Notes: The data come from the RNA Mapping Database (RMDB), library OK2TST. An RNA of 177 nucleotides, treated with DMS and 2A3 and read out base by base. Reactivities are given for positions 27 through 126. The 2A3 profile rests on 3,922 reads. DMS adducts were read by reverse transcription with MarathonRT.
RNA sequence: GGGAACGACUCGAGUAGAGUCGAAAAGCUCACAGGCCAGAUUGCCCACAUCCUGCCUGUCAUGAUCGCCGUCAUCCUGGCCAACGCUGUCGCCCAGAGUCUGCAGCCCUCCCUCUAUGACAGCAUCGUAUCUAACCGAUUUCGAUCGGUUAGAUACAAAAGAAACAACAACAACAAC
Reactivity to DMS in 0.01 (KOAc 150mM, MgCl2 10mM, bicine 150mM(pH8.5), 24C), signal-to-noise 4, nucleotides 027 to 126: g000c010u000c070a110c120a050g000g020c020c080a080g000a110u010u000g000c040c020c020a120c170a090u000c020c030u000g000c050c020u010g010u000c120a070u000g000a050u010c070g020c030c050g030u010c060a050u000c050c010u000g000g020c030c060a090a100c110g010c040u000g010u000c080g020c080c020c030a090g000a090g000u000c040u000g010c040a100g000c030c030c020u000c020c010c010u000c050u010a070u020g010a060c040a040g010c070a110u000c140
Reactivity to 2A3 in 0.01 (KOAc 150mM, MgCl2 10mM, bicine 150mM(pH8.5), 24C), signal-to-noise 3, nucleotides 027 to 126: g020c010u020c020a030c040a040g000g050c060c000a020g010a050u060u120g070c000c000c000a040c010a030u040c000c020u030g040c030c020u040g010u080c020a080u080g070a060u060c040g020c060c000g060u030c020a060u060c000c020u030g020g000c000c000a060a040c050g030c030u020g020u080c010g040c010c010c010a020g010a020g020u030c070u080g020c040a050g050c010c000c020u010c010c000c000u020c040u030a130u110g030a010c000a020g010c010a030u040c060